[RMDB]
The record gives the reactivity of an RNA of 177 nucleotides to DMS and 2A3.
Source: RMDB library OK2TST, as collected in RNAgym.
For 2A3, 1,099 sequencing reads were counted.
2A3 adducts were read by reverse transcription with SuperScript II with manganese.
Conditions: 150 mM KOAc, 10 mM MgCl2 and 150 mM bicine (pH 8.5), 24 C.
RNA sequence: GGGAACGACUCGAGUAGAGUCGAAAAUAGUACCAGUCUGUCAUGUUAUACCUAUGGUUAGACCAGACAUUGAUCGUAUUAUGCUGGAGGACAUGGACAGCUUAAACAUUGAGAACUUCAAGAUUGACGUAUCCUACGCUUUCGAGCGUAGGAUACGAAAAGAAACAACAACAACAAC
Reactivity to DMS in 0.01 (KOAc 150mM, MgCl2 10mM, bicine 150mM(pH8.5), 24C), signal-to-noise 2, nucleotides 027 to 126: u000a110g020u000a130c010c110a090g030u010c030u030g030u010c000a000u000g000u010u000a180u000a120c000c030u000a140u000g010g040u040u000a100g010a200c030c010a010g000a090c140a150u000u050g030a070u000c240g000u010a300u000u000a000u000g010c050u000g070g000a070g020g020a050c010a000u000g000g000a040c040a000g000c170u000u000a040a090a040c140a180u020u000g020a100g000a100a110c060u000u010c010a010a040g000a140u000u000g000a230
Reactivity to 2A3 in 0.01 (KOAc 150mM, MgCl2 10mM, bicine 150mM(pH8.5), 24C), signal-to-noise 2, nucleotides 027 to 126: u040a010g050u000a020c000c000a000g010u030c010u010g010u020c000a010u010g000u020u050a170u100a160c010c020u100a130u210g040g130u020u030a030g080a090c010c000a010g030a100c020a020u070u080g050a080u110c080g040u130a040u120u020a010u120g040c000u000g000g030a030g020g000a010c000a000u030g110g000a020c000a000g000c000u040u100a080a020a000c070a030u060u080g060a030g070a110a050c020u060u010c060a050a060g030a190u050u070g030a090